[RMDB]
RNA sequence: GGGAACGACUCGAGUAGAGUCGAAAAGAAGAGCAACUCCAUCUACGUUGCUCAAGUAGGUGGUAGUAGCGAACAAAGCUGGACGGGAAGUAGGUCCAGCGACUACUUCCGAAGCUACGAAAAGAAAGGGUAAUCGUAACUUCGGUUACGAUUACCCAAAAGAAACAACAACAACAAC
Reactivity to DMS in 0.01 (KOAc 150mM, MgCl2 10mM, bicine 150mM(pH8.5), 24C), signal-to-noise 1, nucleotides 027 to 126: g000a120a110g050a220g020c020a030a000c000u000c060c040a000u000c070u000a130c050g000u000u050g000c070u000c100a010a200g000u040a000g000g000u000g020g000u000a040g000u000a030g000c030g050a140a080c170a090a130a180g000c000u000g030g030a070c000g060g010g000a140a000g080u000a010g000g000u000c000c000a000g000c000g000a000c000u000a030c060u000u000c000c000g000a100a020g020c080u000a050c100g030a040a040a090a090g000a200a070a130
Reactivity to 2A3 in 0.01 (KOAc 150mM, MgCl2 10mM, bicine 150mM(pH8.5), 24C), signal-to-noise 2, nucleotides 027 to 126: g100a000a020g050a000g020c060a050a050c040u050c060c030a040u000c010u070a110c060g130u150u220g060c000u070c050a000a040g000u000a000g100g000u000g050g000u020a000g040u100a000g030c000g060a020a000c090a170a210a010g000c020u050g000g010a030c000g300g000g000a200a150g050u190a060g030g110u000c000c000a000g000c000g000a000c000u000a010c000u040u000c000c000g080a020a000g020c000u000a010c080g060a030a000a120a000g190a080a030a100
Structure probing data (DMS and 2A3) for a 177-nucleotide construct.
For DMS the reverse transcriptase was MarathonRT.
The reactions ran in a buffer of 150 mM KOAc, 10 mM MgCl2 and 150 mM bicine (pH 8.5), at 24 C.
For DMS, 1,164 sequencing reads were counted.
It was measured as part of the RMDB library OK1LIB.